An RNA of 177 nucleotides, treated with DMS and 2A3 and read out base by base. Values are in units of 0.01, from 0 to 300, in steps of 10.
RNA sequence: GGGAACGACUCGAGUAGAGUCGAAAAUGUGAUAAGGAAGCAAAGGGUGUAGCUAUUGAUGACGACAGGAUUAUGGUCUGGAAGCAGAAGUUUGUGGCUAGGGACAUGCCAAUCCCUUCUCCAGAUGGAGACUGUAGUUGUUCGCAACUACAGUCUCAAAAGAAACAACAACAACAAC
Reactivity to DMS in 0.01 (KOAc 150mM, MgCl2 10mM, bicine 150mM(pH8.5), 24C), signal-to-noise 3, nucleotides 027 to 126: u020g030u010g030a090u020a070a070g000g010a080a090g010c060a090a090a100g010g020g020u000g000u010a060g010c040u010a070u020u000g020a040u010g020a100c080g000a110c070a030g020g010a120u010u000a080u010g010g010u010c020u020g030g000a110a080g000c070a040g000a060a070g020u000u010u000g020u010g010g010c030u000a110g000g000g010a060c110a070u010g010c050c090a050a110u010c010c040c000u000u000c030u000c020c050a100g010a100u010g010
Reactivity to 2A3 in 0.01 (KOAc 150mM, MgCl2 10mM, bicine 150mM(pH8.5), 24C), signal-to-noise 2, nucleotides 027 to 126: u140g020u030g020a010u050a110a020g050g010a000a020g000c060a020a070a050g060g070g020u050g060u050a040g000c020u000a070u080u120g080a070u040g030a020c060g010a020c020a020g030g040a030u040u100a100u290g080g000u000c020u020g040g000a070a020g090c020a020g020a100a040g060u030u150u120g080u070g000g020c000u010a060g100g000g000a020c030a050u180g020c020c000a010a090u020c000c030c050u030u030c040u010c030c000a030g000a070u080g100
The reactions ran in a buffer of 150 mM KOAc, 10 mM MgCl2 and 150 mM bicine (pH 8.5), at 24 C. For 2A3 the reverse transcriptase was SuperScript II with manganese.